[RMDB]
RNA sequence: GGGAACGACUCGAGUAGAGUCGAAAAGGGAUUACAGGCAUGAGCCACUGCACGCGGCCAACUGCUUCCUAUAAUUGGGAAGAAACUGGGUUGCUAAAGCCCUGUGGAGGUUAGGAGGAAGCUGGGGCAACUGGAGCAUAUUCGUAUGCUCCAGUUGAAAAGAAACAACAACAACAAC
Reactivity to DMS in 0.01 (KOAc 150mM, MgCl2 10mM, bicine 150mM(pH8.5), 24C), signal-to-noise 4, nucleotides 027 to 126: g010g000g010a110u010u000a100c060a060g000g000c080a070u000g000a110g000c040c050a070c070u000g000c070a070c150g020c080g010g000c030c030a060a060c100u000g000c020u000u000c000c000u000a080u020a080a140u010u000g010g010g020a050a040g010a050a070a070c130u000g000g000g020u010u000g000c130u010a050a110a080g010c000c010c010u000g010u010g000g010a130g010g000u000u010a050g020g000a060g010g010a040a050g020c060u010g020g020g000g010
Reactivity to 2A3 in 0.01 (KOAc 150mM, MgCl2 10mM, bicine 150mM(pH8.5), 24C), signal-to-noise 2, nucleotides 027 to 126: g050g010g010a050u060u170a060c060a080g000g070c040a050u170g040a010g050c000c030a030c050u080g030c050a050c070g060c000g000g010c020c000a020a030c050u050g000c000u030u040c000c000u060a060u130a160a220u190u190g010g000g020a130a010g000a050a030a000c060u070g050g010g000u060u060g010c020u110a230a000a020g000c010c010c000u000g010u060g030g040a070g030g000u140u090a070g040g040a020g000g040a030a000g010c050u040g000g030g000g000
Notes:
The record gives the reactivity of an RNA of 177 nucleotides to DMS and 2A3. The reactions ran in a buffer of 150 mM KOAc, 10 mM MgCl2 and 150 mM bicine (pH 8.5), at 24 C. Source: RMDB library OK2TRN, as collected in RNAgym. Values are in units of 0.01, from 0 to 300, in steps of 10. For DMS, 4,247 sequencing reads were counted. For 2A3 the reverse transcriptase was SuperScript II with manganese.